An RNA of 177 nucleotides, treated with DMS and 2A3 and read out base by base. The data come from the RNA Mapping Database (RMDB), library RFM100. DMS adducts were read by reverse transcription with MarathonRT. The reactions ran in a buffer of 150 mM KOAc, 10 mM MgCl2 and 150 mM bicine (pH 8.5), at 24 C. The 2A3 profile rests on 977 reads. For 2A3 the reverse transcriptase was SuperScript II with manganese.
RNA sequence: GGGAACGACUCGAGUAGAGUCGAAAAUAUGCAGACAUGAGUAACGUUAAGCCGGGUGAAAUCCCCGGCCGCCGUAAACCCGAGGUUUCCAGGGCAACGUGUUUCGUCCCUGGGUUAGCCGGGACCUUAUGCUGCAAGUUUUCGAACUUGCAGCAUAAAAAGAAACAACAACAACAAC
Reactivity to DMS in 0.01 (KOAc 150mM, MgCl2 10mM, bicine 150mM(pH8.5), 24C), signal-to-noise 2, nucleotides 027 to 126: u040a070u030g000c000a010g000a030c060a070u010g000a110g040u000a100a110c040g000u010u020a140a180g020c050c000g010g000g000u000g030a020a070a220u050c060c010c000c000g000g000c000c010g060c220c010g050u000a060a080a070c030c020c020g010a120g000g010u000u000u020c010c020a000g000g000g000c300a020a060c080g000u010g000u000u050u020c000g000u020c000c000c000u000g000g000g030u060u030a040g000c090c000g000g050g000a070c070c020u000
Reactivity to 2A3 in 0.01 (KOAc 150mM, MgCl2 10mM, bicine 150mM(pH8.5), 24C), signal-to-noise 2, nucleotides 027 to 126: u250a060u060g030c050a020g110a070c020a030u110g000a070g150u060a080a070c040g010u040u070a050a000g000c000c000g030g010g000u010g020a030a000a080u090c000c000c000c020g000g000c000c000g010c000c000g050u030a050a050a050c040c000c020g000a150g010g010u040u070u000c000c000a010g030g000g010c000a020a000c040g080u040g160u070u050u040c300g160u300c000c000c010u030g030g020g010u020u060a000g000c000c000g000g000g000a010c000c000u000